Structure probing data (2A3 and DMS) for a 177-nucleotide construct. DMS adducts were read by reverse transcription with MarathonRT. The RNA was probed in 150 mM KOAc, 10 mM MgCl2 and 150 mM bicine (pH 8.5) at 24 C. The data come from the RNA Mapping Database (RMDB), library OK2TRN.
RNA sequence: GGGAACGACUCGAGUAGAGUCGAAAAGACAAGAUGCUGCAGGACCUGCCCGACCUCAUCCUCGACACCCCCGAGGCCCCCCAGGUGUCAGCAGACGGGACAGGAUGGGGAUGUGCCGGGGCGGGGGCACAUGUACCAAAUUCGUUUGGUACAUGUGAAAAGAAACAACAACAACAAC
Reactivity to 2A3 in 0.01 (KOAc 150mM, MgCl2 10mM, bicine 150mM(pH8.5), 24C), signal-to-noise 4, nucleotides 027 to 126: g080a020c040a060a040g040a100u070g020c040u040g040c050a050g060g120a110c000c000u020g020c000c010c010g040a070c010c000u030c020a040u040c000c020u010c020g060a020c040a060c040c010c000c010c010g020a180g110g060c070c010c020c030c020c010a020g040g010u040g020u030c010a010g000c000a010g030a050c040g030g010g010a020c020a010g010g010a000u020g020g000g010g010a000u070g030u050g070c030c020g020g000g000g000c020g000g000g000g000g000
Reactivity to DMS in 0.01 (KOAc 150mM, MgCl2 10mM, bicine 150mM(pH8.5), 24C), signal-to-noise 9, nucleotides 027 to 126: g010a140c120a080a080g010a100u000g010c030u000g010c060a140g000g000a110c040c030u000g010c020c010c010g000a120c030c010u000c020a040u000c010c000u000c070g010a090c090a110c040c020c020c030c030g000a150g010g000c010c010c010c000c010c040a100g010g020u000g000u000c020a090g020c070a070g000a100c100g000g000g010a090c120a040g000g000a060u000g000g000g000g010a100u010g010u000g010c080c040g010g010g000g020c050g010g000g000g000g010